An RNA of 177 nucleotides, treated with DMS and 2A3 and read out base by base.
For DMS the reverse transcriptase was MarathonRT.
2A3 adducts were read by reverse transcription with SuperScript II with manganese.
The RNA was probed in 150 mM KOAc, 10 mM MgCl2 and 150 mM bicine (pH 8.5) at 24 C.

RNA sequence: GGGAACGACUCGAGUAGAGUCGAAAAUGCGUAACAGCUCACUAGUCGAGCGAUCGAGCGUGGAUAAUAAUCGGGCAUAAGCAUAGUACCGAAGAUAUGGAAUUGAAAAAUUGGUAGGGGAGCAUUCGAGAUGACCUAUUUUCGAAUAGGUCAUCUCAAAAGAAACAACAACAACAAC
Reactivity to DMS in 0.01 (KOAc 150mM, MgCl2 10mM, bicine 150mM(pH8.5), 24C), signal-to-noise 8, nucleotides 027 to 126: u030g010c020g020u020a100a110c150a160g000c010u000c030a100c090u040a100g010u020c110g010a020g000c070g010a090u020c060g000a220g010c080g030u020g010g010a090u030a070a070u010a080a070u010c080g000g000g010c040a060u010a070a120g020c100a080u010a060g000u020a100c020c020g000a060a060g010a100u020a070u010g000g000a070a080u010u020g000a030a050a060a060a080u010u000g000g010u010a030g010g000g000g000a070g000c090a100u010u010c160
Reactivity to 2A3 in 0.01 (KOAc 150mM, MgCl2 10mM, bicine 150mM(pH8.5), 24C), signal-to-noise 8, nucleotides 027 to 126: u110g000c010g030u050a110a060c010a050g000c010u000c010a080c040u150a090g120u150c060g010a020g020c030g000a090u060c050g010a030g030c020g010u040g030g040a030u040a120a020u080a040a040u170c030g000g010g000c030a060u070a180a020g020c010a030u070a120g050u090a160c010c010g020a030a030g060a060u090a070u100g070g070a060a060u080u100g090a110a090a030a040a040u050u070g050g010u050a030g010g010g010g010a010g010c020a030u070u140c060
Reactivities are given for positions 27 through 126.